[RMDB]
RNA sequence: GGGAACGACUCGAGUAGAGUCGAAAAAUCAUCAGUGCUCAGGUUGCCGGGCUAACAAUCGAGCCAGUCGGAUCUUCGGGAUAGGGCGGCAGAUAGGUGUCGUAUGGAUUGCCGUCGGCAAGGUGGCCGAACGGCGUGAAGACAAAUUCGCCGUCACGAUUGCGCAUAAUUUCGAUUAUGCGCAAUCAAAAGAAACAACAACAACAAC
Reactivity to DMS in 0.01 (KOAc 150mM, MgCl2 10mM, bicine 150mM(pH8.5), 24C), signal-to-noise 1, nucleotides 027 to 156: a100u000c070a090u020c040a050g010u000g020c000u010c040a030g030g000u000u000g030c020c000g030g020g040c010u000a070a090c070a020a080u000c050g010a060g060c030c020a090g020u040c030g020g010a130u000c060u000u000c020g020g020g010a200u000a070g060g010g020c050g050g030c020a050g020a070u000a040g020g000u000g020u000c010g010u000a160u020g000g000a220u000u010g020c000c000g020u000c010g000g060c040a080a040g000g010u000g020g020c010c000g020a060a030c000g030g040c000g020u000g000a070a090g010a110c030a060a050a180u000u000c090g030c000c020g020u000c050a060c250
Reactivity to 2A3 in 0.01 (KOAc 150mM, MgCl2 10mM, bicine 150mM(pH8.5), 24C), signal-to-noise 3, nucleotides 027 to 156: a010u060c020a000u010c040a040g070u060g100c020u030c050a040g030g050u060u040g010c020c010g120g010g000c010u080a110a020c060a050a070u100c030g020a000g020c020c000a030g110u060c060g000g070a060u040c010u090u050c080g060g000g070a090u100a120g050g000g000c000g000g000c070a050g040a070u100a030g060g060u040g020u040c030g010u100a100u150g070g040a030u080u220g010c000c000g010u010c020g000g000c010a050a090g180g070u120g120g000c000c000g020a080a000c010g040g020c010g000u040g030a060a010g030a030c030a010a060a020u040u020c020g000c030c000g010u020c010a000c020
Source: RMDB library OK3TST, as collected in RNAgym. Structure probing data (DMS and 2A3) for a 207-nucleotide construct. In probing experiments dimethyl sulfate is read out at A N1 and C N3, which are open when not base-paired. The reactions ran in a buffer of 150 mM KOAc, 10 mM MgCl2 and 150 mM bicine (pH 8.5), at 24 C. For 2A3 the reverse transcriptase was SuperScript II with manganese. For 2A3, 1,862 sequencing reads were counted. Reactivities are given for positions 27 through 156.